[RMDB]
RNA sequence: GGGAACGACUCGAGUAGAGUCGAAAAAUCAUGGUUCGCCAUGAUAAAAAAGCGUACUACAAACGAGGUACUGACCUUUGAUCAGCUCCCAAAUAGGAGCUGGGAGGUCGGUACUACCCACCGUUUGUAUCGCAAAAAAGGCUCUUUCGAGAGCCAACCACUAAGGAGAUUUCGAUCUCCUUAGUGGAAAAGAAACAACAACAACAAC
Reactivity to DMS in 0.01 (KOAc 150mM, MgCl2 10mM, bicine 150mM(pH8.5), 24C), signal-to-noise 2, nucleotides 027 to 156: a050u010c000a000u000g000g000u010u000c300g010c000c000a030u000g010a060u010a020a060a070a140a090a160g030c010g010u010a060c090u000a020c010a010a010a000c010g020a120g040g020u010a030c010u000g020a010c010c000u000u010u010g000a080u010c000a040g010c000u000c020c010c000a110a140a170u000a030g010g010a030g020c000u010g000g010g010a000g010g020u000c010g010g010u000a000c010u000a010c030c000c030a300c170c010g000u010u000u010g010u000a030u000c020g030c010a020a030a030a100a120a090g010g010c000u000c000u000u010u000c160g040a090g000a030g010c000c010a020a050
Reactivity to 2A3 in 0.01 (KOAc 150mM, MgCl2 10mM, bicine 150mM(pH8.5), 24C), signal-to-noise 4, nucleotides 027 to 156: a000u010c010a010u010g000g030u070u040c090g030c030c000a010u030g020a020u230a010a180a030a000a000a010g030c020g020u060a110c040u000a000c050a000a010a010c000g020a010g000g000u010a000c000u000g010a010c000c020u090u150u080g210a220u160c000a000g000c010u010c010c030c040a200a160a090u300a120g000g000a000g000c000u000g000g010g000a000g000g000u000c000g000g000u000a000c000u000a000c010c000c000a030c010c000g000u000u000u000g010u020a040u300c090g000c060a010a030a030a040a000a060g030g000c030u030c000u030u150u170c270g060a020g000a000g010c000c000a000a030